RNA sequence: GGGAACGACUCGAGUAGAGUCGAAAACAAUAUGCGACUAUGGUGGAAGCGUGAAUCACGUGGAUAGCCGCUCACAUGGUAGAGCCUCGACAAGUAAUCAAUUUGUUAAAACGGGUGAGCGGUAACGGAGCGGCAAUCAAUUCGUUGAUUGCCGCUCAAAAGAAACAACAACAACAAC
Reactivity to 2A3 in 0.01 (KOAc 150mM, MgCl2 10mM, bicine 150mM(pH8.5), 24C), signal-to-noise 1, nucleotides 027 to 126: c010a000a130u090a170u240g100c000g060a000c000u000a000u060g070g060u040g040g190a010a000g000c000g000u000g120a070a000u030c120a000c060g010u000g000g170a100u060a070g000c000c000g000c000u050c000a000c000a000u120g010g000u270a150g090a000g300c000c000u070c000g050a060c000a000a000g220u150a190a000u090c060a110a040u020u070u010g060u120u280a050a060a070a000c010g130g100g040u000g000a000g000c020g000g000u000a070a000c050g010